[RMDB]
The record gives the reactivity of an RNA of 207 nucleotides to 2A3 and DMS. DMS (dimethyl sulfate) methylates the pairing face of unpaired adenines and cytosines. It was measured as part of the RMDB library RNAMAK.
RNA sequence: GGGAACGACUCGAGUAGAGUCGAAAAACCUUUGUGGCAGCACACACCAUUGUCAGGAAGUAGUACGCCCAUUGGGCGUAGUACUUCCUUGGAUUUAUGGUGAAAUGCUGCCACUCUGGUAAAGAAGGGACAUUACCUUCGGGUAAUGUCCCUUCAACUCAUAUCCUAUGUUCGCAUAGGAUAUGAGAAAAGAAACAACAACAACAAC
Reactivity to 2A3 in 0.01 (KOAc 150mM, MgCl2 10mM, bicine 150mM(pH8.5), 24C), signal-to-noise 2, nucleotides 027 to 156: a010c000c000u010u000u010g000u000g000g000c000a000g020c010a050c010a000c000a000c090c010a000u020u010g010u010c000a000g000g020a000a010g000u000a010g150u000a010c030g010c040c000c040a300u300u300g020g000g010c000g000u000a000g010u000a010c010u000u000c010c010u000u030g010g000a000u010u200u200a020u000g010g010u000g010a000a010a020u030g000c000u000g000c000c000a000c000u000c000u000g010g000u030a030a070a030g010a000a010g000g000g000a000c000a000u010u010a000c000c030u080u110c240g000g000g000u000a000a000u010g000u000c000c000c000u000u000c000a000a010
Reactivity to DMS in 0.01 (KOAc 150mM, MgCl2 10mM, bicine 150mM(pH8.5), 24C), signal-to-noise 2, nucleotides 027 to 156: a050c010c000u000u000u000g010u010g010g020c000a020g000c000a020c050a300c000a030c010c000a010u000u000g000u000c020a060g000g000a050a010g020u000a020g000u000a010c000g030c010c000c010a300u010u000g040g040g030c000g040u010a000g000u010a010c010u000u000c000c010u000u010g020g020a040u000u000u000a010u000g000g020u000g010a080a110a110u010g010c000u000g020c000c000a010c000u000c010u010g000g000u000a080a100a150g010a020a030g020g010g020a050c010a010u000u000a010c010c000u000u000c300g050g000g020u010a000a010u000g010u000c000c000c000u000u000c000a010a100